[RMDB]
RNA sequence: GGGAACGACUCGAGUAGAGUCGAAAAACGGUGCGGAAGUUCGCGCUUCCGUGAAACGCGAAAAUCGGACCGUGGCUGCAAGUCGCAUCGCAAAACCGCGGCAAGUGGAGUUAGCGAGAGGAGGCUGAAACCAUCCAACACUUCGGUGUUGGAUGAAUGCAUAAUCCAUGUUCGCAUGGAUUAUGCAAAAAGAAACAACAACAACAAC
Reactivity to 2A3 in 0.01 (KOAc 150mM, MgCl2 10mM, bicine 150mM(pH8.5), 24C), signal-to-noise 2, nucleotides 027 to 156: a000c020g000g030u080g030c030g040g050a140a070g070u090u090c070g040c030g020c120u040u020c080c100g050u070g070a050a050a000c010g010c010g020a010a030a020a040u120c020g000g000a020c000c010g000u000g040g040c070u090g000c030a150a000g000u000c020g020c090a020u010c030g010c070a030a000a020a030c030c050g010c020g030g080c130a100a010g030u030g000g030a020g010u030u080a030g020c000g010a020g010a070g080g040a020g010g000c020u040g030a140a000a000c030c010a000u030c000c000a000a000c000a000c020u100u080c280g090g000u020g000u000u000g000g000a010u000g000a010a020
Reactivity to DMS in 0.01 (KOAc 150mM, MgCl2 10mM, bicine 150mM(pH8.5), 24C), signal-to-noise 1, nucleotides 027 to 156: a000c010g030g020u000g030c000g030g000a040a120g030u000u000c070g030c070g020c000u000u010c040c180g000u020g010a000a040a040c000g000c000g020a090a040a170a110u000c030g000g010a040c040c000g000u000g030g010c000u000g060c010a050a050g020u010c010g010c030a300u020c020g000c040a020a100a120a070c000c030g030c020g000g010c080a040a170g000u000g000g010a180g040u000u000a170g030c000g000a040g010a190g030g000a040g020g010c030u010g020a060a060a150c170c040a030u000c000c000a020a000c000a010c000u000u000c300g050g000u000g000u000u000g000g000a030u000g000a040a190

Source: RMDB library M2RFPK, as collected in RNAgym. Chemical mapping of a 207-nucleotide RNA with 2A3 and DMS. The DMS profile rests on 1,586 reads. The 2A3 profile rests on 1,100 reads. 2A3 adducts were read by reverse transcription with SuperScript II with manganese. Conditions: 150 mM KOAc, 10 mM MgCl2 and 150 mM bicine (pH 8.5), 24 C.